[RMDB]
RNA sequence: GGGAACGACUCGAGUAGAGUCGAAAAAGGAUUAAGUGGAGGUGUGAUCUCUUCACUUUUUCAAUUUAAAGUGAGAUUCAACUCCUCCAACUUAACCCGAAAACCCGCAUGACUUCGGUCAUGCGGGCAACACUCCUACGUUCGCGUAGGAGUGUUGAAAAGAAACAACAACAACAAC
Reactivity to DMS in 0.01 (KOAc 150mM, MgCl2 10mM, bicine 150mM(pH8.5), 24C), signal-to-noise 1, nucleotides 027 to 126: a120g000g000a040u000u000a020a020g000u010g000g010a000g020g000u000g020u000g000a060u000c150u000c030u030u000c030a000c000u010u010u010u010u010c110a090a110u030u010u000a030a000a020g000u010g010a030g000a030u020u010c070a120a050c030u000c000c000u000c010c000a030a000c000u000u000a000a000c020c000c000g030a160a060a080a230c010c010c000g030c010a020u000g000a030c010u010u030c260g020g030u010c000a010u000g010c000g010g000g010
Reactivity to 2A3 in 0.01 (KOAc 150mM, MgCl2 10mM, bicine 150mM(pH8.5), 24C), signal-to-noise 1, nucleotides 027 to 126: a000g050g000a080u000u020a000a000g010u010g010g010a000g010g000u020g000u020g040a030u010c030u020c030u300u170c040a030c000u020u000u000u010u050c020a050a040u100u110u190a010a020a000g000u000g010a010g010a010u050u020c070a110a120c060u000c000c010u000c000c010a000a000c000u000u010a000a000c000c000c000g030a100a120a050a040c000c000c000g050c020a020u000g010a000c020u080u040c300g010g000u000c000a000u010g040c100g000g000g000
An RNA of 177 nucleotides, treated with DMS and 2A3 and read out base by base. Values cover nucleotides 27 to 126. DMS adducts were read by reverse transcription with MarathonRT.